[RMDB]
RNA sequence: GGGAACGACUCGAGUAGAGUCGAAAACGCCGCGACCCCACAAGACGCGUACGAGCACGCCAAGAACAUCCUCGGCCUGGACAUCAAAGGACACAUCGUCAAGAAACUGCUGGUCGCUGAGGCUAGCACCAUUUACAAACUUCGGUUUGUAAAUGGUAAAAGAAACAACAACAACAAC
Reactivity to DMS in 0.01 (KOAc 150mM, MgCl2 10mM, bicine 150mM(pH8.5), 24C), signal-to-noise 6, nucleotides 027 to 126: c110g020c080c030g010c070g030a120c030c010c020c030a120c150a120a090g020a080c070g010c050g020u020a070c080g010a100g020c050a070c060g000c040c030a100a080g000a090a080c110a080u000c030c010u000c040g020g010c010c040u010g000g000a030c070a080u000c070a030a090a090g000g000a060c040a080c090a050u000c080g000u010c060a090a100g000a070a060a080c120u010g020c010u000g020g010u000c020g000c180u020g000a160g000g010c020u000a020g030c050
Reactivity to 2A3 in 0.01 (KOAc 150mM, MgCl2 10mM, bicine 150mM(pH8.5), 24C), signal-to-noise 5, nucleotides 027 to 126: c040g030c040c010g020c040g060a140c020c010c030c020a040c030a050a030g090a040c040g020c010g040u040a040c070g030a010g050c030a010c050g000c010c010a050a020g040a050a030c020a070u030c000c010u030c010g020g020c010c010u050g030g030a010c010a060u130c050a090a090a070g070g010a010c020a010c000a160u120c060g060u030c030a030a030g050a070a090a020c030u060g010c010u020g020g020u030c020g020c120u120g100a040g010g020c010u010a000g040c010
Structure probing data (DMS and 2A3) for a 177-nucleotide construct. Conditions: 150 mM KOAc, 10 mM MgCl2 and 150 mM bicine (pH 8.5), 24 C. The data come from the RNA Mapping Database (RMDB), library OK2TRN. For DMS, 6,200 sequencing reads were counted. For DMS the reverse transcriptase was MarathonRT.